This 177-nucleotide RNA was probed chemically with 2A3.
The 2A3 profile rests on 428 reads.
RNA sequence: GGGAACGACUCGAGUAGAGUCGAAAAGAAAGAAAAUGGAUAACAUGUCUUUUGCUGCGCCCAUGGGUUCUAGACCAUGGGCCCUCGGCCUAUUUUGUUGCUGUUCCUCAUGUUUCUGCCUAUGCAACUUCUUCGACGGUUUCGACCGUCGAAGAAGAAAAGAAACAACAACAACAAC
Reactivity to 2A3 in 0.01 (KOAc 150mM, MgCl2 10mM, bicine 150mM(pH8.5), 24C), signal-to-noise 1, nucleotides 027 to 126: g000a010a010a010g080a070a100a010a020u080g020g060a160u060a300a040c000a000u000g030u010c000u070u070u000u040g130c090u100g070c080g020c000c000c000a000u000g000g000g030u300u180c160u230a060g100a090c010c000a000u010g000g010g000c020c000c000u000c000g020g060c000c030u000a040u000u040u010u130g070u180u040g000c090u100g020u000u000c000c000u000c020a070u010g040u020u000u000c070u100g050c100c000u100a130u300g070c020a010a040